[RMDB]
RNA sequence: GGGAACGACUCGAGUAGAGUCGAAAACAUUAGCUUCGGCAUCCCACCCUUCGGCUUCGAAAAGCUGAGAUGAGCUCAGCAAGGGAACUCAAGAGACUCAACUCAGAGAACUCAGAGAGAGAAUAAACAAAUCAAUACUAUUCGUAGUAUUGAUUUGAAAAGAAACAACAACAACAAC
Reactivity to 2A3 in 0.01 (KOAc 150mM, MgCl2 10mM, bicine 150mM(pH8.5), 24C), signal-to-noise 4, nucleotides 027 to 126: c020a060u130u190a020g030c010u060u050c130g070g000c020a070u010c010c020c000a040c010c020c010u060u050c030g060g000c000u100u080c090g070a040a080a050a030g010c000u010g000a010g010a060u090g050a030g040c000u000c010a010g030c010a020a020g030g000g020a060a050c000u000c040a060a040g030a020g030a210c010u010c030a030a080c050u030c080a060g020a020g010a170a060c010u020c080a020g020a000g000a000g010a000g050a180a090u170a110a110a020
Reactivity to DMS in 0.01 (KOAc 150mM, MgCl2 10mM, bicine 150mM(pH8.5), 24C), signal-to-noise 4, nucleotides 027 to 126: c090a080u010u010a110g040c030u000u010c120g030g030c030a120u000c010c020c020a240c060c030c040u000u010c050g020g000c040u000u000c060g010a090a100a100a140g000c010u000g010a030g000a210u000g020a060g020c010u000c000a020g000c220a090a060g000g010g020a080a130c020u000c010a150a150g000a050g000a100c030u000c020a060a090c060u000c090a060g010a090g000a050a100c030u000c020a060g000a150g010a120g000a090g000a090a080u010a070a060a150
Source: RMDB library M2PK90, as collected in RNAgym. Structure probing data (2A3 and DMS) for a 177-nucleotide construct. As a SHAPE reagent, 2A3 marks flexible, mostly unpaired nucleotides at the ribose 2'-OH. The 2A3 profile rests on 5,021 reads. The RNA was probed in 150 mM KOAc, 10 mM MgCl2 and 150 mM bicine (pH 8.5) at 24 C. Values cover nucleotides 27 to 126.